This 177-nucleotide RNA was probed chemically with 2A3 and DMS. DMS (dimethyl sulfate) methylates the pairing face of unpaired adenines and cytosines. 2A3 adducts were read by reverse transcription with SuperScript II with manganese. High 2A3 reactivity points to a flexible backbone, as in loops and unpaired stretches. The 2A3 profile rests on 31,541 reads.
RNA sequence: GGGAACGACUCGAGUAGAGUCGAAAAGACCGUUUCCAAUUCGCUUGUGUAUUAUGUGGAAAGAAAUAUCAACACUAUCAUUGGUUGCUCAAACAUAGAACCAAAUGCUUGGAAACAACGGACGAAAGACUAUAGUAUUAUUCGUAAUACUAUAGUCAAAAGAAACAACAACAACAAC
Reactivity to 2A3 in 0.01 (KOAc 150mM, MgCl2 10mM, bicine 150mM(pH8.5), 24C), signal-to-noise 9, nucleotides 027 to 126: g040a010c000c010g000u000u010u000c010c000a030a040u220u210c030g010c020u060u040g040u010g010u210a050u090u010a020u080g020u020g020g040a050a060a040g050a040a210a030u130a040u060c010a010a040c050a030c220u210a130u300c040a080u080u110g030g000u000u040g000c000u010c020a030a050a000c010a010u030a010g040a030a010c000c000a010a020a030u060g000c010u010u010g000g000a020a020a010c040a030a020c040g030g060a010c040g080a110a060a040
Reactivity to DMS in 0.01 (KOAc 150mM, MgCl2 10mM, bicine 150mM(pH8.5), 24C), signal-to-noise 9, nucleotides 027 to 126: g010a170c040c030g010u000u000u000c000c000a030a040u010u020c070g020c050u000u000g010u010g020u000a050u000u000a010u000g010u000g000g000a120a150a050g000a070a070a110u010a050u000c020a010a020c110a100c220u010a090u010c180a130u000u000g010g010u000u000g000c100u000c030a150a120a020c020a010u000a010g010a040a030c020c010a010a020a040u000g010c300u000u000g000g000a020a040a040c060a090a100c060g000g010a150c150g010a100a090a140
DMS adducts were read by reverse transcription with MarathonRT. Conditions: 150 mM KOAc, 10 mM MgCl2 and 150 mM bicine (pH 8.5), 24 C. For DMS, 20,716 sequencing reads were counted.